[RMDB]
RNA sequence: GGGAACGACUCGAGUAGAGUCGAAAACGGCGGUCCUUGGACUAACAGCCCCAAGAACGGCCAGUAGUUUUCUUGGCUGAUUGGCUGUUGGCAUGGGGGCGUCUCGUAGCUGGGAGGUCCGGAGCGGCGAUAAAUAAUGAUUCGUCAUUAUUUAUCGAAAAGAAACAACAACAACAAC
Reactivity to DMS in 0.01 (KOAc 150mM, MgCl2 10mM, bicine 150mM(pH8.5), 24C), signal-to-noise 8, nucleotides 027 to 126: c070g000g010c020g010g000u010c010c010u010u010g010g010a090c020u010a060a120c120a200g010c010c030c210c110a110a180g000a070a070c040g000g010c000c010a040g010u020a070g000u020u010u040u030c090u020u020g000g000c040u000g000a080u010u000g000g000c000u000g000u000u000g010g020c080a120u010g010g000g000g000g000c010g010u000c020u000c060g010u010a080g010c090u020g000g000g000a050g000g000u000c010c030g000g000a050g010c040g010g000
Reactivity to 2A3 in 0.01 (KOAc 150mM, MgCl2 10mM, bicine 150mM(pH8.5), 24C), signal-to-noise 7, nucleotides 027 to 126: c020g020g000c010g010g090u030c000c010u020u060g080g020a040c000u010a040a010c010a030g010c000c010c000c010a050a030g070a120a020c020g030g000c000c010a000g020u040a010g000u010u030u080u080c050u080u090g020g000c010u020g060a110u010u060g000g000c000u000g010u010u010g010g010c020a050u040g010g000g000g000g000c000g020u000c010u000c020g040u030a010g000c020u020g000g010g010a020g000g020u000c000c000g000g010a030g000c010g020g000